[RMDB]
About this RNA
Chemical mapping of a 177-nucleotide RNA with DMS and 2A3. High 2A3 reactivity points to a flexible backbone, as in loops and unpaired stretches. 2A3 adducts were read by reverse transcription with SuperScript II with manganese.

RNA sequence: GGGAACGACUCGAGUAGAGUCGAAAAGAUAUGGACCAGGGUGACCGUUGAUGACCUCCCUCGGAAACGAGGGAGCAAGACGCACCUGGUCCUAAGUCAAAUCCGUGGGUCUUCGGACCCACGGAAACCGCAUAUAAUCGUUCGCGAUUAUAUGCGGAAAAGAAACAACAACAACAAC
Reactivity to DMS in 0.01 (KOAc 150mM, MgCl2 10mM, bicine 150mM(pH8.5), 24C), signal-to-noise 2, nucleotides 027 to 126: g010a050u010a290u030g010g000a020c000c000a030g000g030g020u010g040a120c300c130g010u010u000g000a100u000g020a100c300c010u000c000c000c020u000c020g000g000a040a100a100c000g040a030g020g000g000a000g020c000a000a070g000a010c000g000c130a080c000c000u000g000g010u000c000c000u000a000a040g020u000c060a120a130a120u000c010c000g050u000g020g000g020u000c000u000u010c300g020g000a020c030c010c010a010c010g000g000a000a010a030
Reactivity to 2A3 in 0.01 (KOAc 150mM, MgCl2 10mM, bicine 150mM(pH8.5), 24C), signal-to-noise 1, nucleotides 027 to 126: g010a030u040a020u110g000g000a000c020c020a000g060g100g050u130g140a300c230c050g030u040u030g140a300u090g030a050c000c000u020c030c000c010u000c020g020g000a060a050a060c010g000a000g000g070g000a020g010c010a020a050g000a000c020g030c070a040c000c000u020g000g000u000c000c000u000a010a000g000u000c020a010a000a180u110c000c010g020u050g000g000g000u020c010u060u060c230g070g020a030c000c000c010a000c010g000g000a000a030a000